[RMDB]
Notes:
Structure probing data (DMS and 2A3) for a 177-nucleotide construct. For DMS the reverse transcriptase was MarathonRT.
RNA sequence: GGGAACGACUCGAGUAGAGUCGAAAAAAUAAUGCAUUAAACUGACUGAUCAUCCAUAUUAUUGUAAAGGAGGUAUGUAACAUGGCAGGCGAUAUCGUAGGUACAAUCGGUGACUUCGUUAAAUUAAUCUUUAGUAGGACUUCGGUCCUACUAAAGAAAAAGAAACAACAACAACAAC
Reactivity to DMS in 0.01 (KOAc 150mM, MgCl2 10mM, bicine 150mM(pH8.5), 24C), signal-to-noise 2, nucleotides 027 to 126: a050a050u000a040a050u000g000c070a040u000u000a060a090a080c060u000g000a090c050u000g000a120u000c070a070u010c010c040a020u020a050u000u000a060u010u010g010u010a030a050a080g010g030a080g010g000u000a020u000g010u020a060a080c130a070u000g020g000c030a070g000g000c080g040a060u040a040u000c030g020u000a030g000g020u020a040c080a040a030u000c070g020g010u000g000a020c050u010u000c070g010u000u000a030a040a090u000u000a060a100
Reactivity to 2A3 in 0.01 (KOAc 150mM, MgCl2 10mM, bicine 150mM(pH8.5), 24C), signal-to-noise 1, nucleotides 027 to 126: a000a000u180a080a000u080g000c010a050u000u130a130a080a030c010u040g060a040c010u010g000a050u040c030a030u020c050c030a110u150a160u110u070a110u020u130g160u110a050a050a120g060g020a060g010g000u010a010u090g050u080a090a030c040a080u050g040g000c010a040g050g000c010g050a040u040a040u060c080g090u060a050g050g000u010a080c040a080a080u130c110g050g060u010g030a040c020u110u010c060g030u040u050a080a060a000u170u110a040a030